[RMDB]
RNA sequence: GGGAACGACUCGAGUAGAGUCGAAAAGAUAUGGACGGCAUGGCUUCGAUGAAACUCAUCGGAAACGAUGAGUGGAGAAGCAUGUCCGUCCUAAGUCAAAACCUACAUGUAGUUCGCUACAUGUAGGGAGUUUUACACGGUUCGCCGUGUAAAACUCAAAAGAAACAACAACAACAAC
Reactivity to 2A3 in 0.01 (KOAc 150mM, MgCl2 10mM, bicine 150mM(pH8.5), 24C), signal-to-noise 4, nucleotides 027 to 126: g020a020u030a020u120g000g000a000c020g010g020c020a070u080g300g200c020u030u000c060g300a300u100g000a000a000a010c000u000c000a000u010c000g010g010a050a030a010c010g000a000u000g000a000g000u000g000g000a000g000a000a010g000c000a000u020g000u000c010c000g010u000c000c000u000a020a000g000u000c040a000a010a140a190c000c000u000a010c010a010u000g000u000a010g030u040u090c300g030c190u000a000c000a000u000g010u010a000g020g000
Reactivity to DMS in 0.01 (KOAc 150mM, MgCl2 10mM, bicine 150mM(pH8.5), 24C), signal-to-noise 3, nucleotides 027 to 126: g000a040u010a300u000g000g010a020c020g000g010c010a030u000g020g020c000u000u000c000g010a120u010g010a180a180a020c000u000c000a020u000c060g000g000a080a070a130c000g000a020u000g010a000g000u000g000g000a040g010a020a010g010c010a010u000g000u020c000c020g010u000c000c000u000a010a050g020u000c030a160a060a070a220c000c000u010a000c000a000u000g000u000a010g020u010u020c300g010c020u000a010c000a010u000g000u010a010g000g000
This 177-nucleotide RNA was probed chemically with 2A3 and DMS.
Source: RMDB library TTRDES, as collected in RNAgym.
Conditions: 150 mM KOAc, 10 mM MgCl2 and 150 mM bicine (pH 8.5), 24 C.
For DMS, 3,574 sequencing reads were counted.